Description
The record gives the reactivity of an RNA of 177 nucleotides to DMS and 2A3. DMS (dimethyl sulfate) methylates the pairing face of unpaired adenines and cytosines. 2A3 adducts were read by reverse transcription with SuperScript II with manganese. DMS adducts were read by reverse transcription with MarathonRT. The DMS profile rests on 1,683 reads. Conditions: 150 mM KOAc, 10 mM MgCl2 and 150 mM bicine (pH 8.5), 24 C.
[RMDB]
RNA sequence: GGGAACGACUCGAGUAGAGUCGAAAAACAUGUGAAUCACAGGCCUCAGUUAUCUAAACGAAAUCUGUACUUACUUUCAGAAUGUAAGAGAGUUUUAUCAAUUGAAAAUGCAUUCAAAAUAUGUGUCGGAAACACUGUAGUUCGCUACAGUGUUUCCAAAAGAAACAACAACAACAAC
Reactivity to DMS in 0.01 (KOAc 150mM, MgCl2 10mM, bicine 150mM(pH8.5), 24C), signal-to-noise 1, nucleotides 027 to 126: a040c060a070u080g020u000g010a040a010u040c100a030c000a040g000g000c080c010u070c030a110g040u000u000a090u000c050u020a020a060a040c050g000a050a110a010u040c000u000g000u000a080c020u000u000a000c090u000u000u030c170a080g030a070a060u000g000u000a010a000g050a130g010a040g000u000u000u000u010a050u060c100a000a120u030u040g000a060a040a050a050u000g000c090a050u000u010c050a020a010a090a010u060a040u030g030u010g000u000c070
Reactivity to 2A3 in 0.01 (KOAc 150mM, MgCl2 10mM, bicine 150mM(pH8.5), 24C), signal-to-noise 3, nucleotides 027 to 126: a000c120a100u050g010u000g120a130a090u110c000a020c010a080g070g000c000c000u080c030a010g000u030u170a060u120c100u230a060a060a120c090g020a110a020a000u090c080u090g070u120a110c000u080u030a020c010u030u170u020c010a080g090a100a090u080g030u040a110a030g050a030g000a020g030u000u020u100u030a200u100c080a080a060u050u150g110a070a110a000a050u130g010c060a030u020u010c110a000a000a090a000u240a020u050g050u010g070u060c020